Chemical mapping of a 207-nucleotide RNA with 2A3 and DMS. It was measured as part of the RMDB library OK3TST. DMS adducts were read by reverse transcription with MarathonRT.
RNA sequence: GGGAACGACUCGAGUAGAGUCGAAAAUGGUAGUUAAUAUCGCCAGUAGACAUUUCAGAAAAUAAUGAUUUAUUUAAACAACUCAUAUUUACCGUAUCGGUUGAUAUAUCGUGGCCGUCAUGCUCUUCAGUAGAUACCAUUGUUAACCAUUCGGCUAGUGUAUACUCCCUUUCGAGGGAGUAUACACAAAAGAAACAACAACAACAAC
Reactivity to 2A3 in 0.01 (KOAc 150mM, MgCl2 10mM, bicine 150mM(pH8.5), 24C), signal-to-noise 3, nucleotides 027 to 156: u050g010g010u020a130g040u100u170a110a070u050a100u180c030g010c050c030a020g010u050a010g030a000c050a010u020u040u100c090a070g090a080a100a030a050u190a130a140u070g010a070u130u040u240a040u040u210u150a200a100a060c020a040a040c020u010c160a030u110a100u110u120u060a100c020c020g020u040a080u090c140g000g020u030u120g030a000u010a000u010a000u100c080g010u040g080g030c080c040g040u050c050a050u060g000c040u020c060u140u060c030a040g000u050a010g130a030u030a020c000c000a000u000u000g030u020u010a030a020c000c010a020u010u020c000g020g000c050u030a020
Reactivity to DMS in 0.01 (KOAc 150mM, MgCl2 10mM, bicine 150mM(pH8.5), 24C), signal-to-noise 2, nucleotides 027 to 156: u000g030g040u000a020g020u010u010a160a160u020a030u000c060g010c050c040a090g070u010a070g000a080c070a060u000u000u010c030a190g000a090a080a110a170u010a070a140u020g000a150u020u010u000a060u010u000u010a060a080a100c020a040a060c020u000c050a090u000a110u000u010u000a060c040c020g000u000a050u000c050g060g000u000u000g000a020u000a030u000a080u010c040g040u000g020g010c040c040g020u010c040a020u000g030c040u000c060u000u000c000a090g010u000a040g000a150u000a080c020c010a090u000u010g020u010u010a040a070c010c000a170u000u000c090g030g020c070u010a130